[RMDB]
RNA sequence: GGGAACGACUCGAGUAGAGUCGAAAAUCCGUCCGGGGCCUCUUCGCCGGGGGAGCCCCCUCCCCGUCCUUCCCUUUUCUGAUUAUUCCGACGAUGUUCCCCAGCCAGGGAUUUUCUUCCUCGAGUUUAGCUUUGUCCUUCGGGACAAAGAAAAGAAACAACAACAACAAC
Reactivity to DMS in 0.01 (KOAc 150mM, MgCl2 10mM, bicine 150mM(pH8.5), 24C), signal-to-noise 4, nucleotides 027 to 129: u000c000c000g000u000c010c070g050g030g030g000c170c080u010c060u050u040c020g040c080c060g030g040g010g030g010a070g010c010c000c000c000c000u010c020c040c010c040g060u020c030c040u030u000c000c030c010u020u030u010u020c040u060g010a000u030u050a180u050u000c050c030g010a110c140g000a150u060g010u030u020c000c010c020c090a150g020c040c040a090g040g030g040a060u000u030u040u030c060u000u030c040c000u000c040g040a080g000u010u010u010a100g010
Reactivity to 2A3 in 0.01 (KOAc 150mM, MgCl2 10mM, bicine 150mM(pH8.5), 24C), signal-to-noise 2, nucleotides 027 to 129: u000c000c000g030u070c070c070g010g000g020g030c020c020u030c020u130u100c060g040c060c020g020g000g000g000g000a010g000c030c000c000c000c000u020c030c000c000c000g060u060c010c000u030u050c000c000c000u040u030u050u010c060u030g040a070u030u150a100u170u010c020c010g000a030c020g040a050u130g020u030u010c000c000c000c000a020g010c020c010a030g010g010g030a020u050u040u030u030c020u060u020c000c000u010c010g020a030g020u020u050u080a030g000